[RMDB]
RNA sequence: GGGAACGACUCGAGUAGAGUCGAAAAGAAGAGCAGGCAGAUAAUCUUGUGCAGUAUGCAUGCUCAUACCUCCACAAGAAGGAAGGCAGCAAAAGAAUAACUGCCACUGCACAAGUGGAGCCGCAGACAUGCCCACUAUCUUCGGAUAGUGGGCAUGAAAAGAAACAACAACAACAAC
Reactivity to 2A3 in 0.01 (KOAc 150mM, MgCl2 10mM, bicine 150mM(pH8.5), 24C), signal-to-noise 4, nucleotides 027 to 126: g080a030a010g040a020g020c090a080g000g020c020a010g030a170u170a130a110u160c010u000u010g000u000g010c010a000g000u060a020u110g020c040a050u120g010c020u000c010a000u030a050c000c010u040c010c020a120c060a170a060g180a040a010g050g000a000a070g020g000c010a010g010c010a040a050a120a050g170a110a100u160a130a030c010u020g000c000c000a000c000u000g000c000a000c000a000a020g010u020g010g070a020g010c000c000g020c040a020g020a020
Reactivity to DMS in 0.01 (KOAc 150mM, MgCl2 10mM, bicine 150mM(pH8.5), 24C), signal-to-noise 3, nucleotides 027 to 126: g010a080a050g000a040g010c000a040g020g030c010a120g000a170u030a120a040u030c010u010u000g000u010g000c040a000g010u010a040u030g060c050a040u000g000c060u000c000a070u010a090c030c000u010c050c080a220c280a110a120g020a160a130g000g000a150a060g020g000c010a000g030c100a060a080a080a140g030a090a070u000a100a140c000u000g010c000c060a250c000u000g000c040a010c000a040a000g010u000g000g000a070g000c040c040g000c070a090g000a150